[RMDB]
RNA sequence: GGGAACGACUCGAGUAGAGUCGAAAACUCGCUGUUUUUGUGGCUGGCUUUCAGCGGGCUGGAGGAGCCGGGAGCGGAGGCGGAGGACCGAGCCAAAAACGUCAGCCGAGGCCGGGCGGGCCCGCUCAAAAUCUUCGUAUCUUCGGAUACGAAGAAAGUAGUAAGAGGGGUUCGCCCCUCUUACUACAAAAGAAACAACAACAACAAC
Reactivity to 2A3 in 0.01 (KOAc 150mM, MgCl2 10mM, bicine 150mM(pH8.5), 24C), signal-to-noise 1, nucleotides 027 to 156: c000u000c000g040c020u040g020u000u040u030u020u100g090u040g080g020c030u010g060g000c040u010u100u120c020a000g020c030g010g000g000c020u030g020g110a120g010g040a040g090c060c050g000g010g010a090g040c050g050g020a020g010g000c080g000g020a110g030g060a030c040c070g030a010g080c060c040a120a110a000a000a000c010g020u040c030a030g050c000c000g000a010g010g020c030c070g000g010g050c010g000g000g030c000c000c000g030c020u040c040a110a160a090a200u020c000u010u000c000g000u010a000u000c000u020u000c180g120g000a000u010a000c000g010a000a000g000a010a000a000